[RMDB]
RNA sequence: GGGAACGACUCGAGUAGAGUCGAAAAGGCCGGCAUGCCCAGCCAGCGGCUCCGGAGACCGUCGACACGCAGGGCCAGCGGUGAUCGUGGUGCAGAGGGGUUGGGUCGACGAUGUCUGGUCCAGCGGCCGUACGGUAUCAUUCGUGAUACCGUACGGAAAAGAAACAACAACAACAAC
Reactivity to 2A3 in 0.01 (KOAc 150mM, MgCl2 10mM, bicine 150mM(pH8.5), 24C), signal-to-noise 2, nucleotides 027 to 126: g000g030c000c000g000g050c080a080u130g050c020c020c000a010g050c000c000a000g060c040g030g000c020u000c020c000g060g020a030g070a030c010c010g040u040c000g040a020c020a030c140g000c030a060g040g000g030c000c000a030g030c010g080g020u080g090a150u160c030g090u110g050g040u120g040c040a020g070a120g150g050g010g000u100u040g040g030g000u040c050g040a050c040g010a050u110g040u000c030u060g000g000u020c020c030a020g020c040g080g050
Reactivity to DMS in 0.01 (KOAc 150mM, MgCl2 10mM, bicine 150mM(pH8.5), 24C), signal-to-noise 2, nucleotides 027 to 126: g000g010c050c020g000g030c090a060u010g020c040c010c020a170g020c070c030a140g020c060g010g000c020u010c030c010g000g000a090g000a060c020c020g010u010c040g010a110c060a110c060g010c110a140g030g000g030c020c040a130g020c060g000g010u000g020a070u000c020g010u000g010g000u010g010c080a080g010a100g000g010g000g020u000u010g000g000g000u010c060g020a050c050g020a060u010g000u000c020u000g000g000u000c020c030a100g010c050g010g000
This 177-nucleotide RNA was probed chemically with 2A3 and DMS.
DMS adducts were read by reverse transcription with MarathonRT.
The reactions ran in a buffer of 150 mM KOAc, 10 mM MgCl2 and 150 mM bicine (pH 8.5), at 24 C.
2A3 adducts were read by reverse transcription with SuperScript II with manganese.